[RMDB]
RNA sequence: GGGAACGACUCGAGUAGAGUCGAAAAAGCAUACCAGCUCGUACGCGAGCUGGUAUGCAAAAAUUGGUGUAGCCUUACCGUAGUAGCCACAAAAACGUCAGCUGGAUCUACGGAUCCAGCUGACGAAAAAAGUGUUUUGUGUUCGCACAAAACACAACAAAUCUUUUGAGUUCGCUCAAAAGAUUUGAAAAGAAACAACAACAACAAC
Reactivity to DMS in 0.01 (KOAc 150mM, MgCl2 10mM, bicine 150mM(pH8.5), 24C), signal-to-noise 1, nucleotides 027 to 156: a150g020c000a010u000a030c000c000a000g000c030u000c010g110u000a130c280g050c020g040a050g000c000u010g000g000u000a000u000g030c010a000a000a030a090a120u000u010g020g030u010g020u010a080g000c010c020u000u000a120c060c020g030u010a170g000u010a120g040c010c060a080c080a050a090a060a090a120c020g000u000c020a010g010c020u010g050g010a040u020c000u000a180c260g040g000a040u000c000c010a060g030c040u000g020a000c010g010a000a010a060a090a040a060g010u000g010u000u010u000u010g020u010g000u000u000c280g060c050a030c010a020a010a040a010c010a000c010a060a040
Record summary
Conditions: 150 mM KOAc, 10 mM MgCl2 and 150 mM bicine (pH 8.5), 24 C. An RNA of 207 nucleotides, treated with DMS and read out base by base. DMS adducts were read by reverse transcription with MarathonRT.